[RMDB]
Structure probing data (DMS and 2A3) for a 177-nucleotide construct. Values cover nucleotides 27 to 126. Conditions: 150 mM KOAc, 10 mM MgCl2 and 150 mM bicine (pH 8.5), 24 C. For DMS the reverse transcriptase was MarathonRT.

RNA sequence: GGGAACGACUCGAGUAGAGUCGAAAAGUCCAUAUAGUUUAAGAUGGAAACAUUGAAUCAAGACAUAUUUACUCUUGUUAGGUGAAAGUUGGUGGUUGCCAUGCCAGCCCGUACAUCCGAGAAGGACCCGUCAAUUAUACUUCGGUAUAAUUGACGGAAAAGAAACAACAACAACAAC
Reactivity to DMS in 0.01 (KOAc 150mM, MgCl2 10mM, bicine 150mM(pH8.5), 24C), signal-to-noise 4, nucleotides 027 to 126: g010u020c000c000a080u010a080u010a080g010u000u040u020a090a070g010a030u000g000g010a090a130a170c060a040u010u000g000a110a080u030c050a040a040g030a040c210a120u030a100u020u010u030a070c230u000c020u010u010g000u010u000a170g000g030u000g000a060a070a040g000u000u010g010g020u000g000g010u000u010g010c110c070a040u010g000c020c030a090g000c000c030c030g000u010a050c080a080u000c020c010g000a110g010a160a100g000g010a070c250
Reactivity to 2A3 in 0.01 (KOAc 150mM, MgCl2 10mM, bicine 150mM(pH8.5), 24C), signal-to-noise 4, nucleotides 027 to 126: g050u000c000c020a010u110a030u060a110g120u110u130u090a040a050g030a040u020g000g020a050a040a010c020a030u020u120g050a050a040u080c010a010a020g010a030c030a030u230a130u170u170u100a080c040u020c010u060u040g040u090u070a070g030g040u050g060a130a080a070g080u080u100g030g020u020g040g020u050u120g120c020c020a030u050g010c030c000a030g040c020c000c000g010u030a010c000a030u000c000c000g010a020g020a210a050g010g000a020c000